[RMDB]
RNA sequence: GGGAACGACUCGAGUAGAGUCGAAAAAGCUUAUUGGGUUGGGAGUCUCCGUUUUCUAAGAAAUUUACGGCAUCCUGAUUAAGAACGCUGAAUUUUUAAUCUAAAAAUCAGGUUCACCGAAUACUGCGCUUUUCAAACUAUUCGUAGUUUGAAAAGCAAAAGAAACAACAACAACAAC
Reactivity to DMS in 0.01 (KOAc 150mM, MgCl2 10mM, bicine 150mM(pH8.5), 24C), signal-to-noise 2, nucleotides 027 to 126: a080g000c040u010u000a010u040u000g030g000g000u000u000g030g000g000a070g010u080c120u010c060c020g000u010u030u000u010c040u050a100a150g000a090a040a070u040u020u010a040c030g030g010c300a100u000c000c000u020g010a080u000u000a040a180g000a050a010c040g020c090u000g010a060a070u000u010u020u000u010a050a180u030c070u020a010a030a020a000a010u030c000a010g000g000u000u000c070a130c010c020g000a100a020u020a020c140u000g000c260
Reactivity to 2A3 in 0.01 (KOAc 150mM, MgCl2 10mM, bicine 150mM(pH8.5), 24C), signal-to-noise 3, nucleotides 027 to 126: a000g060c100u090u050a030u080u060g080g000g000u000u090g040g000g020a050g000u050c020u000c120c010g000u040u010u050u020c070u070a100a050g050a050a200a050u140u100u100a020c000g000g000c010a050u030c010c000u020g000a030u050u110a160a050g000a000a010c080g070c290u020g070a080a090u000u000u000u010u120a150a140u090c080u130a050a000a000a000a030u000c000a000g000g000u030u010c000a000c020c010g050a040a020u060a130c080u050g030c020

The data come from the RNA Mapping Database (RMDB), libraries RFM100 and RFMREP. This 177-nucleotide RNA was probed chemically with DMS and 2A3. Reactivities are given for positions 27 through 126. The RNA was probed in 150 mM KOAc, 10 mM MgCl2 and 150 mM bicine (pH 8.5) at 24 C.